[RMDB]
RNA sequence: GGGAACGACUCGAGUAGAGUCGAAAACGGACUUUCGGUUUCAGUUCUUGUUGAGCGAAGACCGUGAUUGGCCUUUGCAUAUUAAGUGUGACUUAGUUAGAGAGACCACGGUUUAAUCGCUGUGGCCCAGACCACAAUCUUUCGAGAUUGUGGUCUGAAAAGAAACAACAACAACAAC
Reactivity to DMS in 0.01 (KOAc 150mM, MgCl2 10mM, bicine 150mM(pH8.5), 24C), signal-to-noise 3, nucleotides 027 to 126: c080g010g010a080c050u010u000u010c060g000g010u010u010u000c090a090g000u000u000c050u010u000g010u010u010g000a050g010c000g010a030a050g020a010c010c020g000u010g000a110u050u030g020g020c030c000u000u000u010g020c040a130u020a050u000u010a010a040g020u020g010u010g000a070c010u010u000a040g010u000u040a150g000a120g000a100g000a070c000c020a020c000g000g000u010u000u000a160a080u010c230g000c000u000g010u000g000g020c060c050
Reactivity to 2A3 in 0.01 (KOAc 150mM, MgCl2 10mM, bicine 150mM(pH8.5), 24C), signal-to-noise 3, nucleotides 027 to 126: c040g010g030a000c020u090u110u060c120g100g040u040u010u090c100a070g000u120u040c050u170u300g160u080u100g010a000g000c000g010a000a010g030a010c010c010g040u060g040a130u060u190g040g020c010c000u030u070u100g020c060a040u060a060u240u100a040a020g030u050g060u100g070a030c030u000u030a020g060u050u160a050g000a020g000a000g020a110c000c000a010c010g000g050u000u020u040a050a030u030c040g000c020u000g030u030g060g000c010c000